[RMDB]
RNA sequence: GGGAACGACUCGAGUAGAGUCGAAAACGCUGGGUCUUGUGGAGCAAGCGAGGUACUGAUUGCUACCUGAAGCGCGCACGGGUAGCGCGUACUACCCACCGCUUGCUCGUAACAUCAAGACCUGUGCUGAAGCGCGCACGGCAACCGAAAGGUGCGACUUCCAUAUUCGGUUCGCCGAAUAUGGAAGAAAAGAAACAACAACAACAAC
Reactivity to DMS in 0.01 (KOAc 150mM, MgCl2 10mM, bicine 150mM(pH8.5), 24C), signal-to-noise 1, nucleotides 027 to 156: c070g040c000u010g030g000g110u000c020u010u030g000u010g040g030a130g000c020a030a050g000c010g000a240g000g020u000a030c000u020g000a130u010u000g040c000u000a050c000c060u010g000a010a100g230c010g000c020g040c030a300c070g010g000g000u000a010g020c010g130c210g000u000a080c030u000a100c050c020c010a300c130c000g000c030u000u000g020c020u010c010g010u020a050a130c150a020u000c040a000a100g010a010c000c000u000g000u000g040c000u000g000a070a060g040c070g000c060g000c020a230c000g000g000c120a090a070c040c020g000a020a090a250g010g000u000g000c000g010a180
Reactivity to 2A3 in 0.01 (KOAc 150mM, MgCl2 10mM, bicine 150mM(pH8.5), 24C), signal-to-noise 3, nucleotides 027 to 156: c040g030c020u040g010g000g010u000c000u000u000g000u030g040g000a000g000c000a010a000g000c000g010a020g010g030u020a020c060u170g180a300u250u300g000c000u000a010c000c000u020g030a220a100g020c010g000c000g000c010a010c010g000g020g000u000a000g000c010g000c000g000u010a010c000u020a020c010c070c050a090c030c020g000c000u000u020g000c000u000c000g000u010a010a000c020a180u270c010a000a000g010a000c010c000u000g000u000g000c010u020g030a150a080g010c020g000c000g000c000a010c000g010g010c000a000a030c000c000g020a080a010a040g020g000u020g010c000g030a060